Overview:
An RNA of 207 nucleotides, treated with 2A3 and read out base by base. It was measured as part of the RMDB library OK3TST. Reactivities are given for positions 27 through 156. Values are in units of 0.01, from 0 to 300, in steps of 10. The reactions ran in a buffer of 150 mM KOAc, 10 mM MgCl2 and 150 mM bicine (pH 8.5), at 24 C.
[RMDB]
RNA sequence: GGGAACGACUCGAGUAGAGUCGAAAAACAAUUGUCGAUGAUUAAUCUGCAAAACGCAUUUGAACGUUUCAGAUUAUCACCGCGUUUAAUCGCCACCGUGAGACUUCCCGGCAAACAAUUCAAGAGACUGUUACCUCUCUCAUGGAAGCUCGAUGGAGGGUAAUAUGGCUUUCGAGCCAUAUUACCCAAAAGAAACAACAACAACAAC
Reactivity to 2A3 in 0.01 (KOAc 150mM, MgCl2 10mM, bicine 150mM(pH8.5), 24C), signal-to-noise 1, nucleotides 027 to 156: a000c040a050a070u230u180g040u200c020g000a050u000g000a000u130u190a030a000u000c000u000g090c100a000a030a140a000c000g000c090a150u140u130u300g160a190a010c030g000u000u000u000c000a000g000a010u000u000a000u010c000a000c060c000g000c060g010u040u130u150a050a040u140c130g020c020c000a000c000c030g010u000g030a050g020a000c020u010u000c020c030c000g000g030c020a030a060a030c010a080a160u020u160c160a190a000g010a000g010a050c050u090g030u160u040a090c020c000u040c000u000c020u020c010a050u070g000g020a090a010g000c010u010c120g040a000u060g060g040a050